The record gives the reactivity of an RNA of 177 nucleotides to DMS. The RNA was probed in 150 mM KOAc, 10 mM MgCl2 and 150 mM bicine (pH 8.5) at 24 C. For DMS, 1,579 sequencing reads were counted. The data come from the RNA Mapping Database (RMDB), library TTRINS.

RNA sequence: GGGAACGACUCGAGUAGAGUCGAAAAGAUAUGGAACUGUUCUGACGGGAGGAUACCCACGACUAUUCUAUCGGAAACGAUAGAACGAAUCGUGGUAUCCGAAGAACGUCAGAACAGUUCCUAAGUCCAAAGGCUAGAUCUUCGGAUCUAGCCUUUGAAAAGAAACAACAACAACAAC
Reactivity to DMS in 0.01 (KOAc 150mM, MgCl2 10mM, bicine 150mM(pH8.5), 24C), signal-to-noise 2, nucleotides 027 to 126: g000a110u010a300u000g000g010a000a000c000u000g000u020u010c000u000g000a030c010g000g000g000a120g030g000a000u000a010c210c030c070a010c010g000a020c070u000a300u000u000c000u000a000u000c000g030g000a170a130a170c000g000a000u000a000g010a000a010c090g000a060a070u000c000g020u010g010g010u010a000u000c020c000g000a050a100g000a170a170c000g010u000c010a000g020a000a000c000a000g000u000u000c000c000u000a020a050g020u000c010